[RMDB]
RNA sequence: GGGAACGACUCGAGUAGAGUCGAAAAGAAAGAAAGAAAGAUGGGCCGAGUUACCUUUGAUCAUCAGUAAGUGAGAUUGUUUCUGAUACGAUUUCGUUUUCUGGCAAUCAAAGGAACUCGACUCGAAGCCUUUGCCCACUUUCGAGUGGGCAAAGGCAAAAGAAACAACAACAACAAC
Reactivity to 2A3 in 0.01 (KOAc 150mM, MgCl2 10mM, bicine 150mM(pH8.5), 24C), signal-to-noise 1, nucleotides 027 to 126: g100a000a070a000g110a070a020a000g080a010a190a000g030a080u120g000g000g000c000c030g040a030g020u120u200a300c000c000u050u000u000g000a000u000c000a000u000c000a000g000u060a000a060g000u010g000a000g030a020u010u010g040u090u190u110c220u120g000a060u050a300c000g000a000u000u000u000c010g000u000u010u000u000c000u000g010g000c110a020a000u000c000a000a000a000g000g080a000a000c010u000c000g050a000c000u000c000g050a020a000